[RMDB]
Overview: This 177-nucleotide RNA was probed chemically with DMS. The data come from the RNA Mapping Database (RMDB), library OK2TRN. The RNA was probed in 150 mM KOAc, 10 mM MgCl2 and 150 mM bicine (pH 8.5) at 24 C.
RNA sequence: GGGAACGACUCGAGUAGAGUCGAAAAUUAGCCCCCUCGCCGGUGAAGUCCUCGCGCUCGAAGAUACGCCAUUUCUUCAGUACCGGCAUGACGACUUCGUCGAGGUGGAUGCGCGGGUCGUAGACACGGUUCUCGGCUUAUUCGUAAGCCGAGAACCAAAAGAAACAACAACAACAAC
Reactivity to DMS in 0.01 (KOAc 150mM, MgCl2 10mM, bicine 150mM(pH8.5), 24C), signal-to-noise 1, nucleotides 027 to 126: u010u010a140g000c020c000c010c010c010u000c020g000c040c040g070g000u010g000a110a180g020u010c050c020u020c050g020c090g010c000u010c180g010a060a000g000a050u010a110c200g050c220c160a040u000u010u020c000u000u010c020a180g000u010a090c130c050g010g030c180a000u010g000a000c100g040a110c150u000u010c040g000u000c000g020a010g000g000u000g040g010a070u000g010c060g000c020g000g000g020u000c070g030u000a090g000a110c130a150c200